[RMDB]
An RNA of 177 nucleotides, treated with DMS and 2A3 and read out base by base.
For DMS the reverse transcriptase was MarathonRT.
The DMS profile rests on 1,292 reads.

RNA sequence: GGGAACGACUCGAGUAGAGUCGAAAAUUCAUGGAGACCCAUCCCACACUGGAUGCCUUACACUGUGACAUCGGCAAUGCCACUGAGUUUAACAAAAUAUUCCAAGAUGAGAUUGGGGAGGUGUCUCGAUAAUGAGCGCGUUCGCGCGCUCAUUAUCAAAAGAAACAACAACAACAAC
Reactivity to DMS in 0.01 (KOAc 150mM, MgCl2 10mM, bicine 150mM(pH8.5), 24C), signal-to-noise 1, nucleotides 027 to 126: u070u020c110a040u090g000g000a010g000a060c060c020c000a110u010c000c000c000a100c120a100c110u020g080g000a020u000g020c060c070u040u030a000c020a250c020u000g060u000g020a050c020a010u000c000g080g010c150a110a190u000g000c030c000a090c000u010g020a040g110u000u000u040a180a100c080a070a020a150a100u000a040u000u020c000c010a040a030g000a240u080g000a060g000a110u000u000g000g020g010g000a020g000g020u070g000u000c000u000c000
Reactivity to 2A3 in 0.01 (KOAc 150mM, MgCl2 10mM, bicine 150mM(pH8.5), 24C), signal-to-noise 2, nucleotides 027 to 126: u060u020c000a030u070g110g010a060g000a020c030c010c000a020u040c010c000c000a060c020a030c000u000g000g000a000u020g050c000c000u030u060a060c100a030c070u030g000u030g040a020c020a080u090c020g010g130c130a060a150u080g040c040c000a090c060u030g030a020g050u040u040u020a100a060c080a000a100a040a110u190a070u070u000c000c030a040a030g140a170u100g000a040g080a170u170u150g000g020g060g020a050g000g050u120g010u020c000u000c030